Notes
Structure probing data (2A3 and DMS) for a 177-nucleotide construct. The RNA was probed in 150 mM KOAc, 10 mM MgCl2 and 150 mM bicine (pH 8.5) at 24 C.
RNA sequence: GGGAACGACUCGAGUAGAGUCGAAAAAUGUAAUAAUUGGUUAUCUGCAUAGAGGAACAGAAAAGUUAUGCGAGUAUAAAACUGUUGAACAGUGUUUACCGAGAAGAUUGGAAGAGGGGAAGAGCAGCUGCUCCUUUAAAUUCGUUUAAAGGAGCAGAAAAGAAACAACAACAACAAC
Reactivity to 2A3 in 0.01 (KOAc 150mM, MgCl2 10mM, bicine 150mM(pH8.5), 24C), signal-to-noise 2, nucleotides 027 to 126: a000u050g000u060a040a060u070a150a100u160u080g040g000u050u060a050u110c030u040g030c000a020u030a100g020a040g070g040a020a040c020a010g140a080a100a020a000g020u070u030a020u050g050c070g070a070g050u050a050u030a120a120a030a030c000u020g050u090u120g070a100a040c010a010g010u010g030u180u130u020a040c010c000g010a010g000a100a010g030a030u070u280g030g020a020a020g000a020g040g060g020g000a010a000g010a000g040c000a010g020
Reactivity to DMS in 0.01 (KOAc 150mM, MgCl2 10mM, bicine 150mM(pH8.5), 24C), signal-to-noise 4, nucleotides 027 to 126: a070u020g000u000a060a070u010a060a100u000u010g010g020u010u000a080u010c040u000g010c050a060u010a060g020a090g000g000a080a070c070a070g000a060a070a110a130g000u000u000a020u010g010c060g000a090g010u000a040u000a050a060a090a040c020u000g010u000u010g000a060a220c040a030g000u000g000u000u000u000a040c040c020g010a090g000a090a040g000a060u000u010g010g010a030a040g010a050g000g000g000g010a040a050g000a070g020c130a080g010